[RMDB]
RNA sequence: GGGAACGACUCGAGUAGAGUCGAAAAGAAGUUAUACGGCAGUUUCAGUGUUGUGUAGAGUGUGAGUUUUCUCGCUUAUUCUACAUAUGAUCCGUUAUAUACGUGUUUAUGCGUCACUGUAUACUGAGGCAGAUACCAUGUUCGCAUGGUAUCUGCCAAAAGAAACAACAACAACAAC
Reactivity to 2A3 in 0.01 (KOAc 150mM, MgCl2 10mM, bicine 150mM(pH8.5), 24C), signal-to-noise 1, nucleotides 027 to 126: g060a060a000g080u130u060a130u070a120c020g040g010c000a020g000u000u090u000c000a020g040u000g020u300u140g030u050g000u030a000g000a000g000u100g030u000g030a020g000u180u100u160u070c030u000c000g020c000u020u010a040u020u010c000u000a010c000a000u070a080u110g090a200u010c010c000g040u140u000a010u000a000u000a110c000g070u070g110u260u300u040a120u300g010c020g030u000c010a000c000u000g000u010a010u010a000c030u000g000a010
An RNA of 177 nucleotides, treated with 2A3 and read out base by base. For 2A3 the reverse transcriptase was SuperScript II with manganese. It was measured as part of the RMDB library OK1LIB. The RNA was probed in 150 mM KOAc, 10 mM MgCl2 and 150 mM bicine (pH 8.5) at 24 C.